Structure probing data (2A3) for a 207-nucleotide construct. The reactions ran in a buffer of 150 mM KOAc, 10 mM MgCl2 and 150 mM bicine (pH 8.5), at 24 C.

RNA sequence: GGGAACGACUCGAGUAGAGUCGAAAAGUGCCGGGCGGCGCUGGCUGACGGCACCUACGACGAGAACAACCCGCCCGCCGGAUGCACCAACCCGCACGGCGUCUACGUGGCCGACACGAGUCGCCAGCGCGAGGUCACGGUCGGCUACCGGGUGACCGUGCGUGUGUAGAUUCGUCUACACACGCACAAAAGAAACAACAACAACAAC
Reactivity to 2A3 in 0.01 (KOAc 150mM, MgCl2 10mM, bicine 150mM(pH8.5), 24C), signal-to-noise 2, nucleotides 027 to 156: g010u010g030c000c020g020g110g130c030g020g000c050g060c150u130g200g030c040u030g060a030c000g000g050c020a000c020c000u090a100c000g100a030c040g000a010g060a210a040c090a080a070c020c000c020g040c040c030c000g040c000c050g060g050a130u100g050c060a030c000c000a030a040c010c000c010g000c010a050c080g000g000c000g000u000c000u060a210c020g010u010g010g070c120c100g010a030c020a000c040g010a000g000u000c000g040c000c020a070g040c030g010c000g020a060g000g030u050c050a050c140g020g000u040c030g010g000c010u070a040c000c110g030g000g030u050g030a070c010c020